This 177-nucleotide RNA was probed chemically with DMS and 2A3.
The reactions ran in a buffer of 150 mM KOAc, 10 mM MgCl2 and 150 mM bicine (pH 8.5), at 24 C.
2A3 adducts were read by reverse transcription with SuperScript II with manganese.
Values cover nucleotides 27 to 126.
RNA sequence: GGGAACGACUCGAGUAGAGUCGAAAAGAUAUGGAGCCAGAAGGCCUUGGAUUUAUAUACACUCGGAAACGAGAAAUAUAUUGUCAGGCUGGUGGCUCCUAAGUCAAAACCUCGGUUCGCCGAGGAACACUAUUAAUGGGUUCGCCCAUUAAUAGUGAAAAGAAACAACAACAACAAC
Reactivity to DMS in 0.01 (KOAc 150mM, MgCl2 10mM, bicine 150mM(pH8.5), 24C), signal-to-noise 9, nucleotides 027 to 126: g010a050u010a300u010g000g010a000g010c000c010a030g010a300a290g000g000c010c010u000u010g020g010a040u000u010u000a010u000a010u000a050c300a270c000u000c000g010g010a070a080a150c000g010a010g000a130a080a160u000a000u000a000u000u000g000u000c020a030g000g010c000u000g000g020u000g000g010c000u000c000c000u000a000a050g010u000c030a090a070a070a100c010c000u000c000g000g000u000u010c210g030c000c000g020a010g000g000a030a070
Reactivity to 2A3 in 0.01 (KOAc 150mM, MgCl2 10mM, bicine 150mM(pH8.5), 24C), signal-to-noise 6, nucleotides 027 to 126: g030a000u060a030u180g000g010a000g010c010c010a020g040a170a020g050g000c010c020u050u160g090g000a020u020u250u010a010u000a000u000a010c160a020c040u010c010g020g040a050a080a040c010g010a010g030a030a110a000u040a000u000a010u010u050g080u090c010a000g000g020c030u050g020g100u020g000g000c000u000c000c000u000a010a000g000u000c000a000a020a060a160c000c000u000c000g000g040u060u080c300g020c070c010g000a000g000g000a010a010